[RMDB]
RNA sequence: GGGAACGACUCGAGUAGAGUCGAAAAGCGAGUGCGCCCCACGGGUGACCCUUGGAGCAAUUUGUCCAGAACGUCACGCUGCGCGGGGUCGAGGCCGGCGAUCAGGUCGGCGAGCUGAUCCCCGGAAGCGCUUUAUGUGGUUCGCCACAUAAAGCGCAAAAGAAACAACAACAACAAC
Reactivity to DMS in 0.01 (KOAc 150mM, MgCl2 10mM, bicine 150mM(pH8.5), 24C), signal-to-noise 2, nucleotides 027 to 126: g010c030g020a160g010u020g030c140g020c010c060c000c000a130c020g020g010g020u010g000a010c010c120c120u000u000g030g000a100g040c070a120a160u000u000u020g020u010c000c010a000g000a110a150c270g030u000c020a020c010g020c170u010g000c040g030c020g000g040g000g040u000c020g010a200g000g020c010c000g000g000c110g020a050u030c130a150g000g010u000c000g020g000c070g030a080g000c000u020g010a140u000c010c020c000c170g020g000a140a110
Reactivity to 2A3 in 0.01 (KOAc 150mM, MgCl2 10mM, bicine 150mM(pH8.5), 24C), signal-to-noise 2, nucleotides 027 to 126: g000c000g030a110g110u180g010c040g010c020c020c000c010a000c000g100g000g000u020g000a010c030c060c010u070u080g060g000a070g070c110a160a300u150u160u300g090u050c040c010a020g030a080a020c070g020u000c000a030c080g140c110u100g040c140g030c070g010g020g020g060u110c050g030a050g130g000c010c010g020g000c010g090a210u210c090a060g060g220u000c000g060g010c030g000a020g000c020u000g000a030u070c030c000c000c000g070g110a110a020